[RMDB]
RNA sequence: GGGAACGACUCGAGUAGAGUCGAAAAAUGAAUUGAUUCGUCAAUUCAUGACCGCAAGCGAGGCGAAAGGCAUUUUAUGCGUACGCUGGCGAAAGCCUAAAAAUCAUCGUGUCUUCGGACACGAUAAGUAAGCGGAAUGAUUCGUCAUUCCGCUUACAAAAGAAACAACAACAACAAC
Reactivity to DMS in 0.01 (KOAc 150mM, MgCl2 10mM, bicine 150mM(pH8.5), 24C), signal-to-noise 4, nucleotides 027 to 126: a010u000g000a010a010u010u010g000a030u000u000c190g010u000c000a010a000u010u000c000a010u000g000a210c040c020g000c150a080a090g020c070g000a140g010g000c020g000a040a060a130g000g020c070a030u010u010u010u010a070u000g020c030g020u010a100c040g010c050u010g000g010c010g010a090a080a080g000c010c020u010a010a050a060a070a080u030c130a020u000c000g000u000g010u000c010u000u000c230g040g000a000c000a000c000g010a010u000a010a070
Reactivity to 2A3 in 0.01 (KOAc 150mM, MgCl2 10mM, bicine 150mM(pH8.5), 24C), signal-to-noise 4, nucleotides 027 to 126: a000u010g010a000a000u000u010g010a010u040u070c200g040u000c080a000a000u000u000c000a000u020g060a040c020c020g010c090a060a010g040c020g070a050g100g000c030g050a140a030a030g170g030c040a020u090u090u030u190a110u170g010c000g030u070a050c050g000c030u020g000g000c010g050a150a020a010g030c010c010u130a120a120a020a000a030u160c070a000u000c020g020u000g000u000c010u000u040c190g040g000a000c000a000c000g000a000u000a010a020

Background: Chemical mapping of a 177-nucleotide RNA with DMS and 2A3. For 2A3 the reverse transcriptase was SuperScript II with manganese. The reactions ran in a buffer of 150 mM KOAc, 10 mM MgCl2 and 150 mM bicine (pH 8.5), at 24 C. Reactivities are rounded to 0.1 and cut off at 0 and 3. Source: RMDB library M2PK50, as collected in RNAgym.